RNA sequence: GGGAACGACUCGAGUAGAGUCGAAAAGGUCGAAGGACUGGAUGUCCUCGACGAACGGCUGCGCGAGGUCGGCGCCGAUGACCUGGUGUUGGGCCAGACCGACUCCGAGCGCGUAUUCGCUUUGAUCAGUUGCCUCUAAUUUCGAUUAGAGGCAACUAAAAGAAACAACAACAACAAC
Reactivity to 2A3 in 0.01 (KOAc 150mM, MgCl2 10mM, bicine 150mM(pH8.5), 24C), signal-to-noise 3, nucleotides 027 to 126: g130g000u010c010g060a100a080g000g010a020c070u150g170g240a140u290g010u000c000c010u010c000g000a000c000g010a050a000c010g000g000c050u040g010c000g000c010g010a020g070g290u030c000g010g020c000g000c000c010g020a040u110g050a110c030c040u030g000g030u130g100u190u300g150g110g000c000c010a010g010a030c000c010g010a000c000u020c020c010g020a020g000c040g000c010g010u020a050u020u100c030g010c100u120u050u100g040a090u160c040
Reactivity to DMS in 0.01 (KOAc 150mM, MgCl2 10mM, bicine 150mM(pH8.5), 24C), signal-to-noise 3, nucleotides 027 to 126: g020g020u000c000g000a090a050g020g010a020c000u010g010g010a160u010g010u000c000c000u010c000g000a010c000g020a070a100c040g010g010c030u010g000c010g010c010g010a070g010g000u000c010g000g010c110g020c030c030g010a230u000g010a080c110c010u000g000g030u010g010u000u010g000g010g030c000c010a040g000a110c060c000g000a030c020u000c010c020g000a030g000c020g000c010g000u000a050u000u000c040g020c070u000u000u010g010a150u010c160

The record gives the reactivity of an RNA of 177 nucleotides to 2A3 and DMS.
For DMS, 5,498 sequencing reads were counted.
The RNA was probed in 150 mM KOAc, 10 mM MgCl2 and 150 mM bicine (pH 8.5) at 24 C.
For 2A3, 3,017 sequencing reads were counted.